[RMDB]
RNA sequence: GGGAACGACUCGAGUAGAGUCGAAAAUCUUUGAAGGUGGGGCGCACGAUGGUGUGCAGCAACAUCUUGCCGUCGGCCGGCAACGUGCGGUGGGUCACCUCGAAGAAAUGGUGGUAGCGCUGGUGGCCCGCAGAUACCACUUCGGUGGUAUCUGCGGAAAAGAAACAACAACAACAAC
Reactivity to 2A3 in 0.01 (KOAc 150mM, MgCl2 10mM, bicine 150mM(pH8.5), 24C), signal-to-noise 2, nucleotides 027 to 126: u010c010u070u070u120g060a030a000g000g010u020g040g000g030g050c000g000c020a080c080g070a120u240g070g140u140g000u010g110c070a060g000c000a010a010c000a020u020c000u030u010g020c000c000g040u210c030g100g060c080c010g050g000c060a000a100c030g080u130g050c010g030g160u150g040g030g100u010c000a000c030c040u000c000g020a030a010g070a110a060a060u110g040g000u000g030g040u150a040g030c020g000c060u020g000g010u020g110g000c070
The data come from the RNA Mapping Database (RMDB), library OK1LIB. This 177-nucleotide RNA was probed chemically with 2A3. The reactions ran in a buffer of 150 mM KOAc, 10 mM MgCl2 and 150 mM bicine (pH 8.5), at 24 C.